[RMDB]
RNA sequence: GGGAACGACUCGAGUAGAGUCGAAAACAGGGUACUCAGGAACUUCUUAGCAAACUCCUUAAAUGAUUCCGAGGCAGAUGGUGGAACACCACUAAGGAGUGAUUGAUGUACAAAUCCGGAGGGCCCUGCUACUAAUACCCUUCGGGGUAUUAGUAGCAAAAGAAACAACAACAACAAC
Reactivity to 2A3 in 0.01 (KOAc 150mM, MgCl2 10mM, bicine 150mM(pH8.5), 24C), signal-to-noise 1, nucleotides 027 to 126: c030a030g040g000g040u010a000c010u030c000a000g000g000a030a030c000u110u000c000u070u110a090g130c040a110a070a160c000u000c000c000u030u020a100a120a020u170g070a040u270u000c070c030g050a000g130g020c080a070g070a200u240g000g140u110g100g000a070a000c020a010c030c000a020c020u000a010a010g010g010a000g030u020g020a010u040u180g020a010u070g030u080a040c080a120a070a050u000c000c030g050g010a010g020g060g040c000c050c000u010
Reactivity to DMS in 0.01 (KOAc 150mM, MgCl2 10mM, bicine 150mM(pH8.5), 24C), signal-to-noise 1, nucleotides 027 to 126: c030a100g000g000g060u000a060c020u010c000a060g030g020a100a140c090u010u000c060u010u000a160g030c190a030a170a070c040u000c010c000u000u000a060a100a130u000g000a240u010u000c070c060g020a050g000g060c140a100g030a040u000g020g020u000g000g020a050a120c170a020c040c030a060c300u000a010a010g010g000a050g010u000g000a140u020u000g000a030u010g020u010a060c170a030a160a100u000c020c000g050g010a010g000g000g000c000c040c000u000
Description:
Source: RMDB library OK2TRN, as collected in RNAgym. An RNA of 177 nucleotides, treated with 2A3 and DMS and read out base by base. For DMS, 515 sequencing reads were counted. For 2A3 the reverse transcriptase was SuperScript II with manganese. The reactions ran in a buffer of 150 mM KOAc, 10 mM MgCl2 and 150 mM bicine (pH 8.5), at 24 C.